[RMDB]
RNA sequence: GGGAACGACUCGAGUAGAGUCGAAAAUGAUCGAGAGAUCUAACGAUGUACGCGAGUCAAGUGCACAGACUCGAGCGAAAGCUCGGUCGAAAGACCGCGUACAUCGGUCGGCGCGUGUACGGUCGACAUUACCUAGCAGUUUCGACUGCUAGGUAAUAAAAGAAACAACAACAACAAC
Reactivity to 2A3 in 0.01 (KOAc 150mM, MgCl2 10mM, bicine 150mM(pH8.5), 24C), signal-to-noise 4, nucleotides 027 to 126: u120g000a000u010c010g010a010g000a000g000a130u000c000u030a070a020c020g000a000u010g000u010a010c000g020c000g030a060g030u010c030a100a090g120u090g120c080a060c020a110g000a000c030u050c160g000a000g000c000g040a130a010a000g000c000u000c010g000g000u010c000g000a030a010a000g000a010c000c010g000c000g000u000a000c000a000u000c010g000g000u010c000g010g020c080g000c040g050u100g040u090a040c060g020g010u010c000g000a010c000
Reactivity to DMS in 0.01 (KOAc 150mM, MgCl2 10mM, bicine 150mM(pH8.5), 24C), signal-to-noise 7, nucleotides 027 to 126: u000g020a010u000c000g010a260g000a250g000a000u000c010u010a100a140c010g000a010u000g000u000a000c000g010c000g020a050g010u000c010a060a120g030u010g000c050a020c070a290g000a010c000u000c000g010a010g010c000g010a120a090a160g010c010u000c000g010g000u000c010g000a100a080a120g000a010c000c000g010c000g010u000a010c010a000u000c000g000g010u000c020g010g000c000g020c130g020u000g030u000a020c030g010g010u000c010g010a100c300
The record gives the reactivity of an RNA of 177 nucleotides to 2A3 and DMS.